An RNA of 177 nucleotides, treated with DMS and read out base by base.
[RMDB]
RNA sequence: GGGAACGACUCGAGUAGAGUCGAAAAGAUAUGGAAGAUAUGGAGUUCCUUGGAAGUAUUCGGAAACGAAUAUGGAGAGGACGUUGAAAUAUCUUCCUAAGUCAAAACCAGACGUUCGCGUCUGGAACAAGCACACCAUGUUCGCAUGGUGUGCUUGAAAAGAAACAACAACAACAAC
Reactivity to DMS in 0.01 (KOAc 150mM, MgCl2 10mM, bicine 150mM(pH8.5), 24C), signal-to-noise 1, nucleotides 027 to 126: g010a060u020a300u010g000g000a010a010g010a030u010a000u000g010g010a120g000u010u010c010c000u000u000g000g000a300a080g020u000a010u000u010c000g010g000a130a170a160c030g010a020a000u000a000u000g000g000a300g000a000g020g000a000c130g000u020u000g000a260a100a000u000a010u000c000u000u000c000c000u000a030a020g010u000c030a030a090a110a160c010c010a010g000a010c000g030u000u000c240g080c000g000u000c000u010g010g010a010a150
The RNA was probed in 150 mM KOAc, 10 mM MgCl2 and 150 mM bicine (pH 8.5) at 24 C.
For DMS, 605 sequencing reads were counted.